[RMDB]
RNA sequence: GGGAACGACUCGAGUAGAGUCGAAAAGAUAUGGACUCCCCACCGUACGAACUACAGCGGCGCCUCGGAAACGAGGCCGAGCUGCGUACGAGGUCCUAAGUCAAACACCAUCGUUCGCGAUGGUGAACUUUAACCUAGAGUUCGCUCUAGGUUAAAGAAAAGAAACAACAACAACAAC
Reactivity to DMS in 0.01 (KOAc 150mM, MgCl2 10mM, bicine 150mM(pH8.5), 24C), signal-to-noise 5, nucleotides 027 to 126: g010a050u010a170u010g000g000a020c010u000c110c000c000c030a300c100c000g000u000a000c020g000a060a050c100u020a300c010a020g010c000g020g040c300g000c010c000u000c000g000g000a080a090a180c000g020a000g000g010c000c010g000a130g010c000u000g000c000g000u000a010c020g000a140g010g000u000c010c010u010a110a100g010u000c040a130a110a260c010a000c000c000a000u000c000g020u000u020c190g010c000g020a010u000g000g020u000g000a020a050
Reactivity to 2A3 in 0.01 (KOAc 150mM, MgCl2 10mM, bicine 150mM(pH8.5), 24C), signal-to-noise 2, nucleotides 027 to 126: g030a020u110a070u170g020g030a010c030u160c040c000c000c020a030c000c000g010u000a010c000g020a150a060c070u180a060c300a010g000c000g120g020c130g020c070c000u000c010g040g000a050a070a040c020g000a000g000g000c000c000g030a020g030c000u000g000c000g000u000a000c000g010a030g020g000u000c020c010u050a240a030g110u050c060a070a060a060c010a000c010c000a010u020c000g030u070u070c300g000c020g110a000u000g000g000u000g000a000a000

Conditions: 150 mM KOAc, 10 mM MgCl2 and 150 mM bicine (pH 8.5), 24 C.
This 177-nucleotide RNA was probed chemically with DMS and 2A3.
Source: RMDB library TTRDEL, as collected in RNAgym.
The 2A3 profile rests on 7,288 reads.
2A3 adducts were read by reverse transcription with SuperScript II with manganese.